The record gives the reactivity of an RNA of 177 nucleotides to DMS and 2A3. For DMS the reverse transcriptase was MarathonRT. DMS (dimethyl sulfate) methylates the pairing face of unpaired adenines and cytosines. For 2A3, 7,468 sequencing reads were counted. The reactions ran in a buffer of 150 mM KOAc, 10 mM MgCl2 and 150 mM bicine (pH 8.5), at 24 C.

[RMDB]
RNA sequence: GGGAACGACUCGAGUAGAGUCGAAAAGAUAUGGAGUGAUUAAGGGAGCAUCGUAUCGGAAACGAUACUUGAUGCAUCGAUCUUACGGUCACUCCUAAGUCAAAACGUACUGCUUCGGCAGUACGAACUCUCGAUGUUAGUUCGCUAACAUCGAGAGAAAAGAAACAACAACAACAAC
Reactivity to DMS in 0.01 (KOAc 150mM, MgCl2 10mM, bicine 150mM(pH8.5), 24C), signal-to-noise 2, nucleotides 027 to 126: g000a050u000a140u020g000g010a050g060u000g010a030u000u000a010a010g000g000g030a050g000c000a000u010c020g000u000a010u000c000g010g010a030a010a060c000g000a020u000a000c020u020u010g020a020u000g000c000a280u010c230g000a070u020c000u000u000a080c300g030g000u000c000a000c010u000c000c000u000a010a080g000u010c000a080a090a110a300c050g010u000a000c010u000g000c000u000u000c300g020g000c030a000g010u000a000c000g010a050a060
Reactivity to 2A3 in 0.01 (KOAc 150mM, MgCl2 10mM, bicine 150mM(pH8.5), 24C), signal-to-noise 2, nucleotides 027 to 126: g030a000u010a020u090g000g000a020g000u010g000a020u020u080a040a040g000g010g000a040g000c000a000u010c000g010u010a000u000c000g000g010a020a020a000c010g000a000u000a020c000u070u300g010a000u000g000c000a020u300c000g010a020u030c010u000u030a040c120g060g010u010c000a000c000u000c010c000u000a010a000g020u020c020a020a030a080a130c000g000u010a020c000u010g030c000u060u090c300g170g000c000a000g000u000a000c000g000a010a000